[RMDB]
RNA sequence: GGGAACGACUCGAGUAGAGUCGAAAAAUAAAGAGCGUACAUCUCUCUCUGACUGUACGACAGUCUGACUCUCUCGUACAAUCGCUCAACGAGAGAGAGAGAGCGUUCAAAGAAGCGAGAAAAAAAAUCAUACUUCGUACUUCGGUACGAAGUAUGAAAAAGAAACAACAACAACAAC
Reactivity to 2A3 in 0.01 (KOAc 150mM, MgCl2 10mM, bicine 150mM(pH8.5), 24C), signal-to-noise 2, nucleotides 027 to 126: a030u220a000a190a030g000a000g000c040g000u020a010c090a250u000c000u000c000u010c010u030c020u060g000a030c010u000g000u070a060c040g080a060c080a000g010u050c170u160g040a100c000u030c000u020c000u010c030g000u000a010c040a020a200u030c050g000c070u110c110a020a060c040g020a030g000a000g000a010g010a020g010a010g020a050g000c000g000u000u050c090a100a100a010g110a090a010g030c080g080a020g220a180a010a000a020a020a000a000a030
Reactivity to DMS in 0.01 (KOAc 150mM, MgCl2 10mM, bicine 150mM(pH8.5), 24C), signal-to-noise 1, nucleotides 027 to 126: a090u010a030a090a150g000a040g000c010g000u000a090c080a300u000c000u000c010u000c040u000c020u000g030a020c040u000g030u010a020c100g000a040c090a000g030u000c040u000g010a300c100u000c010u010c080u010c000g030u000a010c100a040a080u030c000g000c150u000c080a170a030c170g000a010g000a000g000a010g040a000g000a050g000a250g050c000g000u000u000c050a160a080a120g010a040a010g010c100g000a080g040a030a000a000a000a030a060a120a090
An RNA of 177 nucleotides, treated with 2A3 and DMS and read out base by base. The data come from the RNA Mapping Database (RMDB), library M2PK90.